The data come from the RNA Mapping Database (RMDB), library OK3TST. Structure probing data (2A3 and DMS) for a 207-nucleotide construct. The RNA was probed in 150 mM KOAc, 10 mM MgCl2 and 150 mM bicine (pH 8.5) at 24 C. For DMS the reverse transcriptase was MarathonRT. The 2A3 profile rests on 458 reads.
RNA sequence: GGGAACGACUCGAGUAGAGUCGAAAAUGAAUGACCAAUGUGUAAGAUGUCCAAAGCAUUCACAGGAAGAGGAUCUGUGAAUCCUCAAGUGCAAAAUAGAAUAGUGGAACUUAGUGGAUCAGUAAUAAGUCCACGUUCUCAUAUAAGAACUAUAAUAUCAUCCCCAGUAGUUCGCUACUGGGGAUGAAAAAGAAACAACAACAACAAC
Reactivity to 2A3 in 0.01 (KOAc 150mM, MgCl2 10mM, bicine 150mM(pH8.5), 24C), signal-to-noise 1, nucleotides 027 to 156: u140g030a000a100u070g010a010c000c030a060a070u080g040u000g000u020a060a040g030a220u060g070u040c080c000a100a020a000g000c050a020u020u010c050a000c000a000g000g060a020a180g050a010g000g010a020u040c070u180g300u060g090a030a000u000c000c000u050c060a020a020g070u010g010c000a060a000a000a130u060a070g060a060a000u060a140g000u050g030g000a010a070c010u000u000a000g030u070g050g000a010u020c050a030g060u020a070a080u000a060a050g010u010c000c000a000c000g000u000u000c000u000c010a060u160a000u030a090a010g090a100a000c140u120a000u080a190a080u040a020
Reactivity to DMS in 0.01 (KOAc 150mM, MgCl2 10mM, bicine 150mM(pH8.5), 24C), signal-to-noise 1, nucleotides 027 to 156: u000g000a130a080u000g010a270c050c050a050a090u000g070u020g020u000a090a150g010a140u000g020u000c000c040a060a110a250g010c050a090u010u000c000a090c080a110g040g040a150a130g000a040g000g010a010u000c040u000g050u010g000a080a070u000c020c010u010c000a030a090g030u000g010c030a020a030a110a110u000a090g000a060a040u000a050g000u030g040g000a100a070c050u000u000a110g030u000g020g010a050u000c090a160g020u000a010a150u000a080a130g000u000c030c020a030c020g000u010u000c000u000c040a100u020a150u000a040a080g000a020a070c080u010a090u000a000a200u000a150
Annotation: 2A3 adducts were read by reverse transcription with SuperScript II with manganese.